Conditions: 150 mM KOAc, 10 mM MgCl2 and 150 mM bicine (pH 8.5), 24 C. This 177-nucleotide RNA was probed chemically with 2A3 and DMS. For 2A3, 864 sequencing reads were counted. For DMS, 1,572 sequencing reads were counted. Source: RMDB library OK1LIB, as collected in RNAgym.

RNA sequence: GGGAACGACUCGAGUAGAGUCGAAAAAGCGCAUCAGGAGGGUGCAACUAUUGUGGUCUUCGAGCAUUAGUUGGUGAAGGUCGUGAGAGGGUGAUUUCUGUACCCAGAACAGUGGCACAGCAGAGGGUACGCUCGCUAUGUUCGCAUAGCGAGCGUAAAAAGAAACAACAACAACAAC
Reactivity to 2A3 in 0.01 (KOAc 150mM, MgCl2 10mM, bicine 150mM(pH8.5), 24C), signal-to-noise 2, nucleotides 027 to 126: a030g090c020g010c000a060u060c070a060g000g120a000g000g100g040u070g100c040a010a000c000u000a050u090u060g020u090g000g050u050c050u060u070c050g020a000g000c020a030u000u070a010g020u030u100g060g050u090g040a040a050g060g030u060c040g000u050g050a050g000a000g050g030g120u060g110a210u000u200u070c000u040g000u040a020c060c000c000a000g030a040a000c040a020g030u120g050g000c040a030c000a020g000c000a000g000a030g060g000g010
Reactivity to DMS in 0.01 (KOAc 150mM, MgCl2 10mM, bicine 150mM(pH8.5), 24C), signal-to-noise 1, nucleotides 027 to 126: a130g020c000g010c040a030u000c040a050g010g000a040g000g010g040u000g000c030a030a080c060u000a040u050u000g020u030g020g000u000c030u000u010c100g010a140g000c030a000u000u020a080g000u010u000g000g110u010g000a010a070g000g010u010c020g000u020g000a140g010a130g020g000g000u010g000a070u000u040u020c000u020g020u020a040c020c000c020a090g000a030a060c110a130g050u060g000g000c070a060c100a030g000c110a040g010a190g000g010g000